[RMDB]
RNA sequence: GGGAACGACUCGAGUAGAGUCGAAAAACAACGCUUCGGCGUUGUAAAAAAGCGUACUACCCUGAGGUAUAGGGAGAAUGUGGUCCCAAAUAGGACCAUAUUCGACGAUCUAUACUCCCCACCAGGGUAUCGCAAAAAAGCCUUGUUCGCAAGGCAAGAUUUUGUAAAGUUUCGACUUUACAAAAUCAAAAGAAACAACAACAACAAC
Reactivity to DMS in 0.01 (KOAc 150mM, MgCl2 10mM, bicine 150mM(pH8.5), 24C), signal-to-noise 2, nucleotides 027 to 156: a070c010a020a000c000g040c000u000u000c300g100g000c020g050u000u000g020u000a020a050a040a090a060a110g020c010g040u000a100c160u000a010c000c000c010u000g010a300g010g000u000a020u000a010g010g000g020a080g000a010a000u000g010u000g010g000u000c000c020c000a080a130a170u000a040g020g010a020c000c000a010u010a000u010u000c000g010a060c150g030a090u000c000u000a020u000a030c030u000c190c100c070c070a300c190c020a090g010g040g000u000a000u010c000g020c020a010a020a090a090a080a110g010c000c000u010u000g010u000u000c280g030c040a030a030g020g040c020a040a060
Reactivity to 2A3 in 0.01 (KOAc 150mM, MgCl2 10mM, bicine 150mM(pH8.5), 24C), signal-to-noise 2, nucleotides 027 to 156: a010c000a000a000c000g000c020u050u060c220g140g000c020g020u030u030g020u050a000a050a000a000a000a000g040c040g010u090a090c020u010a010c010c000c000u000g000a010g000g040u000a000u000a000g000g000g000a010g000a000a000u000g000u010g010g000u020c020c000c040a100a150a040u210a030g000g000a000c000c000a000u000a000u010u000c000g050a090c000g000a010u000c000u000a000u000a010c040u150c070c060c010c010a060c010c000a000g040g020g000u010a030u160c010g000c000a070a000a000a050a050a020g000c010c000u020u020g010u060u070c190g010c130a000a000g000g010c000a000a000